[RMDB]
RNA sequence: GGGAACGACUCGAGUAGAGUCGAAAAGGGAGGUUGGUGGUGGACGCACUGCUCGCCAACCGGGUCAGGUCUGGAAAGAAGCAGCCCUAACGAGUUCUGGUACGGGUCAUCGUACCAGCCUCCUAUUUAAACUACCUUUCACUUCGGUGAAAGGUAGCAUUCACAGUAACUUCGGUUACUGUGAAUGAAAAGAAACAACAACAACAAC
Reactivity to DMS in 0.01 (KOAc 150mM, MgCl2 10mM, bicine 150mM(pH8.5), 24C), signal-to-noise 1, nucleotides 027 to 156: g010g020g030a040g050g000u000u000g040g040u020g000g030u000g030g010a040c020g020c000a020c010u010g020c000u020c040g000c010c050a090a140c160c120g040g000g010u020c060a300g020g000u010c000u000g000g020a170a210a120g000a030a030g010c040a290g020c030c000c020u010a210a060c020g000a040g020u020u010c100u000g080g000u000a040c000g000g020g000u000c040a130u010c010g000u000a050c010c000a020g010c300c000u000c000c000u010a110u030u010u010a110a090a280c000u000a010c000c000u000u000u000c010a020c020u000u010c270g030g000u000g040a000a000a010g020g020u000a000g020
Reactivity to 2A3 in 0.01 (KOAc 150mM, MgCl2 10mM, bicine 150mM(pH8.5), 24C), signal-to-noise 3, nucleotides 027 to 156: g030g000g000a010g000g010u000u010g000g020u020g000g040u000g000g020a000c010g000c010a020c020u070g000c000u000c000g040c060c030a100a170c160c030g000g000g030u110c010a010g000g000u000c000u030g140g140a200a140a060g000a030a040g000c000a010g010c030c000c000u000a020a010c010g010a020g020u140u170c080u230g050g010u040a020c010g000g010g220u030c010a000u030c010g070u080a030c000c000a000g000c000c000u010c000c000u020a110u010u130u080a080a050a010c000u000a000c000c000u000u010u000c000a000c010u010u110c260g070g000u000g000a000a000a000g000g000u000a000g000